RNA sequence: GGGAACGACUCGAGUAGAGUCGAAAACUGCAAAACAAUGACUCUGUAUUAGUAGAACUUAAGGAAGACAAUCCCCGACUAGCUGUACUUAAAAGAAACCUCAGCGUUUCACACUUUGCCUAUCCGGCCGUACACCUACCACCUAAAAUUAUAACCAUCGACACUAUUAAUUCGUUAAUAGUGUCGAAAAAGAAACAACAACAACAAC
Reactivity to DMS in 0.01 (KOAc 150mM, MgCl2 10mM, bicine 150mM(pH8.5), 24C), signal-to-noise 2, nucleotides 027 to 156: c050u010g030c030a070a080a120a110c080a070a160u010g020a100c040u000c020u020g000u000a100u000u010a080g040u010a050g000a060a050c080u000u000a080a100g040g010a130a050g010a090c080a060a120u010c050c000c000c010g040a080c030u010a080g030c030u010g010u000a040c060u000u000a030a050a070a110g000a070a030a030c060c030u000c140a100g020c020g000u000u000u000c030a120c040a070c060u000u000u000g020c010c020u000a080u000c070c040g020g000c020c060g020u010a050c020a080c010c000u000a050c020c030a060c020c010u010a050a010a050a120u000u000a070u000a060a120c010c030a120
Reactivity to 2A3 in 0.01 (KOAc 150mM, MgCl2 10mM, bicine 150mM(pH8.5), 24C), signal-to-noise 6, nucleotides 027 to 156: c040u060g010c020a030a020a050a080c050a050a110u120g040a050c020u030c030u080g060u130a090u140u090a100g060u030a040g020a130a020c020u070u080a080a040g030g010a020a030g060a040c030a030a110u040c040c000c000c020g030a040c030u040a010g000c030u020g030u070a050c010u060u100a060a060a030a050g040a040a060a010c010c010u130c100a050g020c040g110u020u050u030c030a040c010a010c060u100u140u110g010c000c000u040a080u080c040c010g020g000c010c010g050u030a020c020a000c030c010u050a040c010c040a020c020c010u070a100a110a040a020u240u210a100u190a140a040c060c020a020
An RNA of 207 nucleotides, treated with DMS and 2A3 and read out base by base. DMS adducts were read by reverse transcription with MarathonRT. Conditions: 150 mM KOAc, 10 mM MgCl2 and 150 mM bicine (pH 8.5), 24 C. It was measured as part of the RMDB library OK3TST. For 2A3 the reverse transcriptase was SuperScript II with manganese.